Structure probing data (2A3 and DMS) for a 207-nucleotide construct. The DMS profile rests on 10,032 reads. As a SHAPE reagent, 2A3 marks flexible, mostly unpaired nucleotides at the ribose 2'-OH. Conditions: 150 mM KOAc, 10 mM MgCl2 and 150 mM bicine (pH 8.5), 24 C. High DMS reactivity at an A or C suggests that its Watson-Crick edge is free. The 2A3 profile rests on 5,191 reads. Reactivities are given for positions 27 through 156.
[RMDB]
RNA sequence: GGGAACGACUCGAGUAGAGUCGAAAAGCUCUGUAAUGGGAUGGGAUCCGAAGCCCCAUUGUGGGAUAAUACAGGCUCUCCCAUCCAACUCCUAUUCCAACACGUCCUCGUCGUACAGAGUGGUAACUAAGGUAUAGCUCCUUCGGGAGCUAUACAACACUAUAUUAACGUUCGCGUUAAUAUAGUGAAAAGAAACAACAACAACAAC
Reactivity to 2A3 in 0.01 (KOAc 150mM, MgCl2 10mM, bicine 150mM(pH8.5), 24C), signal-to-noise 7, nucleotides 027 to 156: g000c000u000c010u030g030u060a120a120u160g110g000g010a000u010g000g000g000a050u210c010c020g030a070a040g050c010c010c020c040a200u170u220g050u300g030g000g010a060u090a170a050u150a230c120a070g000g000c000u000c010u000c000c000c000a000u000c000c010a000a000c010u020c000c020u060a100u100u070c030c020a050a040c030a030c100g090u090c020c030u110c050g090u030c030g020u040a000c000a020g010a030g010u070g000g070u120a140a080c090u050a140a000g070g000u000a000u000a000g000c000u010c000c010u000u080c110g060g000g000a000g070c000u000a000u000a000c000a000a000
Reactivity to DMS in 0.01 (KOAc 150mM, MgCl2 10mM, bicine 150mM(pH8.5), 24C), signal-to-noise 4, nucleotides 027 to 156: g030c010u010c000u010g010u000a060a110u000g010g020g020a010u000g010g010g020a050u010c020c020g010a160a210g000c030c000c010c000a300u010u000g030u010g030g010g000a130u000a070a130u010a100c100a230g000g010c040u000c100u000c010c010c000a050u000c010c010a050a040c010u000c030c010u000a120u000u000c030c030a080a120c050a080c060g000u000c010c020u010c050g000u000c060g010u000a040c020a030g020a030g010u000g010g020u000a070a130c080u000a070a130g020g020u010a010u000a020g010c000u000c000c010u000u010c300g050g030g020a010g000c000u000a000u000a010c000a050a160